Chemical mapping of a 207-nucleotide RNA with DMS and 2A3. Source: RMDB library VIROID, as collected in RNAgym.
RNA sequence: GGGAACGACUCGAGUAGAGUCGAAAACCUCGGCACGAGGACGUGCCUGAUUUUGAGUGGGGGAGGAUGUCACGGACAAAUUCCGUGGCCGUGUUAGGCCAACAUUGAAGAGCGUACCUAGCUGCGUUUCAACCUGCACGGGUUGGGGCAGCUUAACGAUAGUAUCCGAGUUCGCUCGGAUACUAUCAAAAGAAACAACAACAACAAC
Reactivity to DMS in 0.01 (KOAc 150mM, MgCl2 10mM, bicine 150mM(pH8.5), 24C), signal-to-noise 2, nucleotides 027 to 156: c060c000u020c040g050g040c050a050c000g010a100g050g000a120c040g000u010g010c060c020u000g020a040u020u000u020u000g020a130g040u010g020g000g030g040g010a160g000g030a160u020g020u000c000a040c000g040g020a070c100a140a120a200u000u000c000c010g050u000g010g000c020c100g000u010g000u020u000a140g040g000c020c040a060a110c030a130u010u020g020a080a100g000a090g050c070g000u000a100c040c040u000a090g010c000u000g010c020g020u000u000u000c010a040a000c030c010u000g020c220a160c270g000g050g010u000u000g020g000g010g020c020a030g040c010u000u000a030a110c220
Reactivity to 2A3 in 0.01 (KOAc 150mM, MgCl2 10mM, bicine 150mM(pH8.5), 24C), signal-to-noise 4, nucleotides 027 to 156: c000c000u000c030g000g020c040a010c030g020a040g070g150a080c030g020u050g030c000c100u120g130a160u000u100u060u100g100a060g020u070g000g020g040g000g000a010g020g010a020u060g020u030c000a020c030g000g010a020c080a130a140a060u170u000c030c040g020u000g020g000c000c000g030u150g090u140u150a060g000g000c040c000a060a040c060a100u110u180g060a120a040g010a010g010c030g010u050a090c010c050u010a000g000c010u020g000c000g100u040u100u150c010a000a000c010c010u070g020c140a070c220g010g000g000u010u000g000g010g040g010c000a000g000c000u010u040a030a010c050